[RMDB]
RNA sequence: GGGAACGACUCGAGUAGAGUCGAAAAAAAAAACUGCGAAGGGGGGACGGAGAAGGCUAUGUUGGCCGGGCGACGGUUGUCCCGGUUUAAGCGUGUAGGGUGGUUUUCCAGGCAAAUCCGGAUAUAACGAAUAACAAUACUUCGGUAUUGUUAUUCGAAAAGAAACAACAACAACAAC
Reactivity to DMS in 0.01 (KOAc 150mM, MgCl2 10mM, bicine 150mM(pH8.5), 24C), signal-to-noise 2, nucleotides 027 to 126: a010a050a070a050a070a070c090u000g030c070g010a100a050g000g020g010g000g010g000a040c060g020g000a070g030a090a070g010g010c060u000a040u020g010u010u000g000g020c000c000g000g000g010c300g020a050c130g010g000u010u010g010u010c010c000c000g000g010u010u000u000a040a090g010c040g010u010g010u010a050g010g000g010u000g000g000u000u000u000u010c020c020a100g000g000c070a030a090a060u010c030c020g000g020a090u010a050u000a080a120